[RMDB]
RNA sequence: GGGAACGACUCGAGUAGAGUCGAAAAAAUCUAUCUGCCCUCCGGGUGUGACUAUUAUGCAUAUUCGCCAGGGCCAUGCUGAAGGAUUGGGCCAUGCUGUGCUAUGCGCCAAACCGCUGGUGGGUAACCUAGGUACCCACUUCGGUGGGUACCUAGGAAAAGAAACAACAACAACAAC
Reactivity to 2A3 in 0.01 (KOAc 150mM, MgCl2 10mM, bicine 150mM(pH8.5), 24C), signal-to-noise 1, nucleotides 027 to 126: a000a000u050c030u080a090u010c070u000g010c040c000c000u030c000c000g060g020g040u040g030u080g040a100c040u050a060u300u070a120u200g010c010a020u000a040u130u030c030g040c000c010a000g000g040g050c000c000a030u080g060c110u140g050a070a120g110g040a100u160u080g070g000g000c000c000a020u140g020c050u090g020u050g110c010u050a000u050g030c020g040c010c030a030a000a060c000c010g010c180u070g000g000u000g070g030g000u000a010a010
Reactivity to DMS in 0.01 (KOAc 150mM, MgCl2 10mM, bicine 150mM(pH8.5), 24C), signal-to-noise 2, nucleotides 027 to 126: a060a050u000c050u000a090u010c110u000g010c020c000c010u010c050c020g010g010g000u010g030u000g000a040c030u010a130u010u010a070u000g000c010a020u000a030u000u010c070g020c110c040a050g020g010g000c030c110a090u000g020c090u020g010a060a100g010g000a110u030u010g020g010g000c020c000a060u010g030c040u010g000u000g010c090u000a020u000g020c120g000c020c060a050a030a070c030c020g010c060u000g030g000u000g020g020g010u000a050a120
This 177-nucleotide RNA was probed chemically with 2A3 and DMS. The RNA was probed in 150 mM KOAc, 10 mM MgCl2 and 150 mM bicine (pH 8.5) at 24 C. For 2A3 the reverse transcriptase was SuperScript II with manganese. DMS adducts were read by reverse transcription with MarathonRT.